[RMDB]
RNA sequence: GGGAACGACUCGAGUAGAGUCGAAAAUGGCGCAGGCCUCCCUUCCUCCUCAAGGAAGCCAAAGACACCAUCACAAUCAGGCAGCCAGGAGCCAGGGCUUCCAUAGGCCCAGCUCUGUACCUGUAGGACAACUUCUAUGGUUCGCCAUAGAAGUUGUAAAAGAAACAACAACAACAAC
Reactivity to DMS in 0.01 (KOAc 150mM, MgCl2 10mM, bicine 150mM(pH8.5), 24C), signal-to-noise 6, nucleotides 027 to 126: u010g000g010c040g000c100a120g000g000c040c010u000c030c030c030u000u010c030c010u000c060c040u020c140a100a120g010g010a080a070g010c030c030a050a090a100g000a090c060a110c050c050a060u030c070a130c120a110a080u050c060a040g010g010c060a080g000c100c110a180g000g000a030g010c010c040a130g010g000g000c010u010u000c140c130a100u060a050g010g000c000c000c010a300g000c010u000c010u000g010u010a040c080c010u000g000u010a090g000g000
Reactivity to 2A3 in 0.01 (KOAc 150mM, MgCl2 10mM, bicine 150mM(pH8.5), 24C), signal-to-noise 8, nucleotides 027 to 126: u080g020g000c020g020c070a030g040g100c000c010u060c020c000c010u010u050c000c000u020c010c010u070c040a030a040g010g020a060a010g030c030c020a100a090a020g040a030c020a030c060c000a050u080c020a030c040a110a100u110c020a040g070g000c020a020g060c040c020a030g030g020a000g000c020c060a140g020g000g000c020u150u060c130c020a110u130a080g030g000c000c000c000a000g000c010u000c000u010g020u030a040c010c010u030g040u090a050g070g100